[RMDB]
RNA sequence: GGGAACGACUCGAGUAGAGUCGAAAACCCUGUCGGUGAAGUCUCCCGCACGAGUCCUCUUCCUAGGUCCGGAGUCGAUCUCCAUCUGAUCCGUCCGGGCCCUCUUCGUCGGGGGAGCUCCCUCCCCAUGCCAGCCGCUUCGGCGGCUGGAAAAGAAACAACAACAACAAC
Reactivity to DMS in 0.01 (KOAc 150mM, MgCl2 10mM, bicine 150mM(pH8.5), 24C), signal-to-noise 2, nucleotides 027 to 129: c020c000c000u030g110u020c160g080g060u030g020a090a080g020u090c090u030c000c000c000g070c110a000c000g010a000g000u040c080c020u050c100u060u000c020c040u010a040g020g120u000c010c090g040g000a030g030u070c090g000a050u030c150u080c160c180a170u110c110u000g020a000u020c040c290g070u020c030c050g000g010g030c020c000c060u000c050u000u060c070g030u040c030g010g080g040g040g010a000g020c010u000c050c030c030u000c000c030c000c110a130u030g060
Reactivity to 2A3 in 0.01 (KOAc 150mM, MgCl2 10mM, bicine 150mM(pH8.5), 24C), signal-to-noise 3, nucleotides 027 to 129: c000c000c020u070g170u130c160g040g060u050g080a070a020g030u000c010u020c070c010c010g030c000a050c000g000a020g060u080c000c010u100c090u120u030c040c040u000a010g000g000u000c000c000g020g020a030g020u140c060g050a010u020c070u000c060c020a200u090c140u100g000a000u040c030c080g050u010c030c000g020g000g000c010c040c010u010c010u070u090c040g090u030c020g000g000g000g000g000a020g000c000u010c000c010c000u000c010c000c000c050a020u070g080
Annotation:
Structure probing data (DMS and 2A3) for a 170-nucleotide construct. DMS adducts were read by reverse transcription with MarathonRT. Values cover nucleotides 27 to 129. The data come from the RNA Mapping Database (RMDB), library 15KLIB. The RNA was probed in 150 mM KOAc, 10 mM MgCl2 and 150 mM bicine (pH 8.5) at 24 C.